Background: An RNA of 177 nucleotides, treated with DMS and read out base by base. For DMS the reverse transcriptase was MarathonRT. The RNA was probed in 150 mM KOAc, 10 mM MgCl2 and 150 mM bicine (pH 8.5) at 24 C.

RNA sequence: GGGAACGACUCGAGUAGAGUCGAAAAUGCCACGAAAGGAUGCUAUAGUAGAUUUAUUUAGAGAGAGGAGAGAGCUACUAUAGCAUCCAUUUUACACUCUCCUCUCACAAUUUUAAGUGGCUAAGAAGGGUAUACCUAGGUUCGCCUAGGUAUACCCAAAAGAAACAACAACAACAAC
Reactivity to DMS in 0.01 (KOAc 150mM, MgCl2 10mM, bicine 150mM(pH8.5), 24C), signal-to-noise 1, nucleotides 027 to 126: u080g060c000c000a000c100g070a140a100a020g000g000a000u000g020c010u000a000u000a000g020u000a000g000a300u000u010u000a040u030u000u130a010g000a030g000a030g000a000g000g040a050g010a070g030a300g000c030u000a000c000u000a000u010a050g040c000a000u000c000c020a000u120u000u160u000a210c300a070c100u000c000u000c000c000u000c000u010c000a100c150a040a000u070u000u000u110a030a260g020u010g000g000c000u030a050a000g020a110a050